[RMDB]
RNA sequence: GGGAACGACUCGAGUAGAGUCGAAAAGAUAUGGAUGCCAUCGAUCUGUACUGAAUUUAUACUACCCACCAGCUUUCGGAAACGAAAGCUGAGGUAUAUUAGUCAGUACAGGGAGGCAUCCUAAGUCCAUUGUCAAGUGCUUCGGCACUUGACAAUGAAAAGAAACAACAACAACAAC
Reactivity to 2A3 in 0.01 (KOAc 150mM, MgCl2 10mM, bicine 150mM(pH8.5), 24C), signal-to-noise 1, nucleotides 027 to 126: g050a030u160a060u250g010g020a020u010g010c040c000a300u300c140g050a070u040c010u000g020u020a010c000u030g070a160a130u060u110u030a040u000a020c090u030a050c030c030c090a170c020c050a010g000c000u000u000u000c040g000g080a160a170a110c010g000a000a000a000g000c000u000g000a010g010g020u010a010u000a000u050u030a020g050u000c000a000g000u000a010c000a000g010g000g010a010g020g000c000a000u000c000c000u000a050a000g050u000c010
Reactivity to DMS in 0.01 (KOAc 150mM, MgCl2 10mM, bicine 150mM(pH8.5), 24C), signal-to-noise 2, nucleotides 027 to 126: g010a110u040a300u020g000g020a000u000g000c000c000a290u010c220g010a040u050c010u010g040u020a010c000u000g000a020a050u000u000u000a000u000a020c240u000a030c000c010c070a300c170c000a000g030c000u000u000u020c000g000g000a060a050a300c000g000a000a000a000g020c010u000g010a010g010g000u000a020u000a000u010u000a020g000u000c010a000g000u000a010c000a000g000g000g000a020g010g020c010a000u000c010c000u000a000a080g000u010c080
The record gives the reactivity of an RNA of 177 nucleotides to 2A3 and DMS.
The reactions ran in a buffer of 150 mM KOAc, 10 mM MgCl2 and 150 mM bicine (pH 8.5), at 24 C.
DMS adducts were read by reverse transcription with MarathonRT.